[RMDB]
RNA sequence: GGGAACGACUCGAGUAGAGUCGAAAAGAAAGAAAGAAAAAGCUGAAUGUGAGAUUUGGAUGGAACCAAAUCUUCAGCUGCAUUGGCACAAGAUUUGGUUUCCUCCAAUAUCUCACCUUCAACUGAAGCACACUUUGUCGUUCGCGACAAAGUGUGCAAAAGAAACAACAACAACAAC
Reactivity to 2A3 in 0.01 (KOAc 150mM, MgCl2 10mM, bicine 150mM(pH8.5), 24C), signal-to-noise 1, nucleotides 027 to 126: g190a000a020a000g070a000a020a060g100a030a110a000a000a000g000c000u000g000a000a000u000g010u000g000a000g000a010u040u000u030g000g020a060u080g030g000a000a000c010c010a010a010a010u000c000u010u010c030a000g000c020u040g010c030a210u050u300g100g030c000a010c000a090a020g000a000u000u000u020g000g050u000u010u030c000c000u000c010c000a000a000u030a000u000c000u010c020a000c000c000u050u000c000a000a040c000u020g070a110a040
Notes:
The record gives the reactivity of an RNA of 177 nucleotides to 2A3. Conditions: 150 mM KOAc, 10 mM MgCl2 and 150 mM bicine (pH 8.5), 24 C. As a SHAPE reagent, 2A3 marks flexible, mostly unpaired nucleotides at the ribose 2'-OH.